[RMDB]
RNA sequence: GGGAACGACUCGAGUAGAGUCGAAAACUGAUGCACGAUUCGUCGUGCAUCAGCAGUCACCUUUGUGACCUACCCUUUGAUCUACUCAGCCCAUUGGGCUGGUGUAGGGAGGAUGGUCACUCUGGUCCAGGAGCAGAAUAGUUCGCUAUUCUGCUAAUGUAAGGUACACGUUCGCGUGUACCUUACAAAAAGAAACAACAACAACAAC
Reactivity to 2A3 in 0.01 (KOAc 150mM, MgCl2 10mM, bicine 150mM(pH8.5), 24C), signal-to-noise 3, nucleotides 027 to 156: c000u000g000a000u010g020c020a010c020g020a020u040u080c260g010u010c000g010u170g000c000a000u000c000a000g010c010a010g160u220c080a040c010c000u010u000u000g000u010g000a000c010c010u050a060c030c010c000u080u250u050g050a050u060c000u000a010c040u010c000a000g000c010c030c100a300u170u300g010g000g010c000u000g000g070u170g000u000a010g010g030g000a000g020g000a000u010g000g020u000c000a000c000u000c000u000g040g000u010c050c030a140g100g000a020g000c010a000g000a020a000u020a010g040u040u160c240g020c140u010a000u000u000c000u010g000c000u010a020a020
Reactivity to DMS in 0.01 (KOAc 150mM, MgCl2 10mM, bicine 150mM(pH8.5), 24C), signal-to-noise 1, nucleotides 027 to 156: c000u000g000a000u000g030c000a010c000g000a060u000u000c300g000u000c000g030u020g000c000a000u000c000a020g010c020a040g000u000c050a060c000c040u000u000u000g010u000g000a040c000c010u010a110c040c000c010u000u000u010g000a090u020c000u000a010c000u000c000a050g020c000c000c010a300u000u020g030g020g060c010u000g000g050u020g000u020a040g010g020g010a020g030g030a030u000g010g030u000c000a020c000u020c010u000g020g000u000c030c060a300g030g000a080g040c000a020g010a050a020u000a050g010u010u030c300g010c000u000a030u000u010c000u000g010c010u000a000a030